[RMDB]
RNA sequence: GGGAACGACUCGAGUAGAGUCGAAAAGAUAUGGAUCGCAUGGAGCAACAGCCAUAGAUCGGAAACGAUCUCAUGGACAUGCUCCCUGCGAUCCUAAGUCAAAAGCUCCUAUGUUCGCAUAGGAGCAGUAAUUAUAACACUUCGGUGUUAUAAUUACAAAAGAAACAACAACAACAAC
Reactivity to 2A3 in 0.01 (KOAc 150mM, MgCl2 10mM, bicine 150mM(pH8.5), 24C), signal-to-noise 5, nucleotides 027 to 126: g000a000u010a010u050g000g000a010u000c010g000c000a000u020g000g010a000g010c160a160a160c090a240g000c010c000a010u000a000g010a000u010c010g010g000a020a020a010c000g000a000u000c010u050c090a020u010g010g020a010c030a140u300g000c000u000c000c000c000u000g000c000g000a000u000c000c000u000a000a000g000u000c000a000a000a020a260g010c000u000c000c000u010a000u010g050u030u100c300g000c200a000u000a000g000g000a000g010c000a000
Reactivity to DMS in 0.01 (KOAc 150mM, MgCl2 10mM, bicine 150mM(pH8.5), 24C), signal-to-noise 8, nucleotides 027 to 126: g000a010u000a100u020g000g000a000u000c000g010c000a000u000g010g020a040g040c000a110a070c270a110g010c000c000a000u000a010g000a010u000c000g000g010a020a030a050c000g010a010u000c000u000c300a000u000g010g000a010c030a300u020g020c000u000c000c000c030u000g010c010g010a000u000c000c000u000a000a040g000u010c010a130a080a140a150g000c000u000c000c000u000a000u000g010u010u030c270g030c000a010u000a010g000g000a010g020c010a010